[RMDB]
This 207-nucleotide RNA was probed chemically with 2A3 and DMS. Conditions: 150 mM KOAc, 10 mM MgCl2 and 150 mM bicine (pH 8.5), 24 C. The DMS profile rests on 2,659 reads.

RNA sequence: GGGAACGACUCGAGUAGAGUCGAAAAGCAAGGUUCGCCUUGCAACAACCGUAGGCUCCUCCCCACCCGUGAAUGGUCGUUGAAAUUUCCUUCGAAAGAGGGAAAUGGAGACCAUAAACGGAGGGAGCCUAAACGGCACAGCAUGCUUCGGCAUGAAGACACAUAGUCAUUUCGAUGACUAUGUGUCAAAAGAAACAACAACAACAAC
Reactivity to 2A3 in 0.01 (KOAc 150mM, MgCl2 10mM, bicine 150mM(pH8.5), 24C), signal-to-noise 4, nucleotides 027 to 156: g000c000a000a010g050g020u110u170c180g170c020c000u010u030g050c010a050a030c050a010a010c020c000g010u000a020g000g000c010u000c010c000u160c060c020c010c000a020c000c000c000g000u000g000a070a040u020g000g000u010c020g120u150u030g000a000a000a000u000u000u000c010c000u000u000c000g050a060a040a040g000a010g010g000g000a000a000a000u000g000g000a000g000a000c000c000a010u010a010a020a010c000g000g000a010g000g000g000a000g010c010c000u010a010a040a000c000g000g000c160a040c060a220g090c000a020u030g010c010u130u200c290g130g000c010a000u040g050a060a050
Reactivity to DMS in 0.01 (KOAc 150mM, MgCl2 10mM, bicine 150mM(pH8.5), 24C), signal-to-noise 2, nucleotides 027 to 156: g000c020a080a000g020g010u000u000c220g020c050c010u000u000g010c000a050a010c030a040a010c010c000g000u000a010g020g040c010u020c000c010u000c060c040c010c140a300c300c050c000g010u000g000a300a050u000g030g010u050c030g000u000u030g010a190a140a020u000u000u000c030c000u000u000c010g060a070a100a210g020a050g000g000g010a010a000a000u020g010g000a300g050a000c000c010a020u000a010a260a060c020g010g030a240g010g000g010a010g010c040c000u000a010a070a040c000g010g040c040a090c100a120g040c010a050u010g000c030u000u000c300g040g040c020a050u000g000a080a140
For 2A3 the reverse transcriptase was SuperScript II with manganese. For 2A3, 5,454 sequencing reads were counted. DMS adducts were read by reverse transcription with MarathonRT.